[RMDB]
RNA sequence: GGGAACGACUCGAGUAGAGUCGAAAAAGACGGAAACCCAUCGACUGUCACCAGAUGCUGCAUCACCUGAUCAAUGAUGGCUCAACGGUAUCCGGCGGUACAACUGAAUACUUGUAGCUGCCUUUUGAAAAGGAGUUCAUCUUCGGAUGAACUCCAACUUGGUGUACGUCUUCGGACGUACACCAAGAAAAGAAACAACAACAACAAC
Reactivity to 2A3 in 0.01 (KOAc 150mM, MgCl2 10mM, bicine 150mM(pH8.5), 24C), signal-to-noise 2, nucleotides 027 to 156: a000g020a010c080g060g030a020a060a080c000c030c000a120u090c130g050a040c030u040g040u050c030a000c050c000a010g050a150u080g080c000u050g060c030a040u000c000a050c010c060u090g080a130u120c050a090a040u060g000a000u050g030g030c000u000c040a020a110c050g010g000u010a050u000c030c020g040g000c020g000g000u000a010c020a020a000c100u250g140a200a010u060a210c030u000u030g020u040a000g030c000u010g010c000c030u150u130u080u210g120a100a050a000a000g000g000a000g010u000u000c030a000u000c000u010u090c120g150g000a000u000g000a000a030c010u020c000c000a000a000
Source: RMDB library M2RFPK, as collected in RNAgym. Chemical mapping of a 207-nucleotide RNA with 2A3. For 2A3 the reverse transcriptase was SuperScript II with manganese. The RNA was probed in 150 mM KOAc, 10 mM MgCl2 and 150 mM bicine (pH 8.5) at 24 C.